[RMDB]
RNA sequence: GGGAACGACUCGAGUAGAGUCGAAAACGCGGUUUAUGGCUUACACCUUAAUAAAGGCGGCAAAGGCUCAAGUUAUGCACACCUUUUUCAUGUUAACGAGCGCGGUCAAAUUGAUAUUGCAAUGUAUGUUGACAAACUGGUUAAAGGUUGUGAGUCCAUCUACCUUCGUCUUCGGACGAAGGUAGAUAAAAGAAACAACAACAACAAC
Reactivity to 2A3 in 0.01 (KOAc 150mM, MgCl2 10mM, bicine 150mM(pH8.5), 24C), signal-to-noise 4, nucleotides 027 to 156: c060g010c070g030g020u010u100u080a060u170g010g000c000u010u050a020c020a010c040c000u030u090a090a010u110a090a170a030g030g020c050g000g000c030a070a080a030g110g000c010u040c050a070a050g010u080u060a070u180g030c020a020c000a060c080c000u030u020u000u080u090c040a060u080g020u050u020a060a030c020g010a010g090c050g000c030g070g030u020c010a000a110a190u150u060g040a040u080a040u120u130g010c040a020a000u110g030u040a060u120g060u050u000g030a030c010a040a180a010c080u070g060g100u070u090a080a010a020g040g020u060u080g010u020g010a020g040u010c060c000
Reactivity to DMS in 0.01 (KOAc 150mM, MgCl2 10mM, bicine 150mM(pH8.5), 24C), signal-to-noise 2, nucleotides 027 to 156: c050g110c040g010g040u010u000u000a080u010g010g000c040u010u030a140c050a050c000c000u010u020a090a140u000a010a040a060g020g060c010g000g020c080a050a050a140g030g000c050u020c050a070a090g020u000u000a090u030g030c020a090c110a110c040c000u000u000u010u000u010c020a180u010g000u000u000a080a050c090g010a160g030c160g030c080g010g010u020c050a040a020a130u020u000g010a160u000a070u010u000g060c040a090a050u000g030u040a080u000g010u010u020g020a030c040a100a100a100c080u010g020g030u000u010a050a030a020g010g020u010u010g010u010g020a080g040u010c020c130
This 207-nucleotide RNA was probed chemically with 2A3 and DMS. 2A3 adducts were read by reverse transcription with SuperScript II with manganese. The DMS profile rests on 2,222 reads. It was measured as part of the RMDB library OK3TST.